[RMDB]
RNA sequence: GGGAACGACUCGAGUAGAGUCGAAAAUGAAAGCUGUGUGAGCGAGGCGGGCGGAGGAUGAGGCCGUGCCCGGGCUCUGGCUGCAGCCGCGCGGGGACACGCCGUGCACCCUCGGGCUCCGGAAAAACUGCACUUGUCAAUUCGUUGACAAGUGCAGAAAAGAAACAACAACAACAAC
Reactivity to DMS in 0.01 (KOAc 150mM, MgCl2 10mM, bicine 150mM(pH8.5), 24C), signal-to-noise 1, nucleotides 027 to 126: u020g010a160a120a070g000c070u000g020u000g020u000g020a060g020c050g010a050g000g000c100g000g000g020c050g010g020a040g000g000a110u000g020a080g000g010c080c080g010u000g000c010c010c030g030g000g000c030u000c040u020g020g000c070u010g000c130a050g010c110c040g000c100g000c050g000g000g000g000a140c050a070c110g010c050c020g010u000g040c080a100c070c000c020u000c010g000g020g000c000u010c020c000g020g000a030a030a080a060a140